An RNA of 177 nucleotides, treated with DMS and 2A3 and read out base by base. Values cover nucleotides 27 to 126. For 2A3 the reverse transcriptase was SuperScript II with manganese. The data come from the RNA Mapping Database (RMDB), library OK1LIB. For DMS the reverse transcriptase was MarathonRT.

RNA sequence: GGGAACGACUCGAGUAGAGUCGAAAAGAAGAGCAGUCAGAUAAUCUUGUGCAGGAUGAAUGCUCGUAACUUCAUAGCACAAGUAGAUGUAGAUAACUUUAAUCUCACAUAGCGGAGGAGCCGCAGACCGAGGAUUAAUCUUCGGAUUAAUCCUCGGAAAAGAAACAACAACAACAAC
Reactivity to DMS in 0.01 (KOAc 150mM, MgCl2 10mM, bicine 150mM(pH8.5), 24C), signal-to-noise 1, nucleotides 027 to 126: g000a120a060g010a060g030c050a080g000u000c060a200g000a090u000a090a040u030c000u000u000g000u000g010c030a060g060g030a080u000g000a020a020u020g000c050u010c120g000u060a100a160c070u030u010c020a040u030a020g040c000a010c000a020a050g000u000a040g000a080u000g000u050a000g020a020u040a040a050c110u040u060u000a170a000u000c040u000c030a060c060a010u000a090g000c030g030g000a150g030g050a040g000c000c040g070c100a110g000a110
Reactivity to 2A3 in 0.01 (KOAc 150mM, MgCl2 10mM, bicine 150mM(pH8.5), 24C), signal-to-noise 3, nucleotides 027 to 126: g050a030a000g030a000g010c070a010g040u010c020a010g070a140u090a140a200u070c030u010u000g040u000g010c030a020g190g110a000u000g020a060a070u210g080c080u080c120g040u050a030a030c000u020u030c000a100u010a010g000c000a000c000a000a020g010u110a000g070a030u040g030u200a020g010a080u060a040a000c000u000u040u190a120a030u000c000u070c000a080c010a080u220a050g010c010g020g020a110g040g060a020g240c000c000g000c010a010g000a080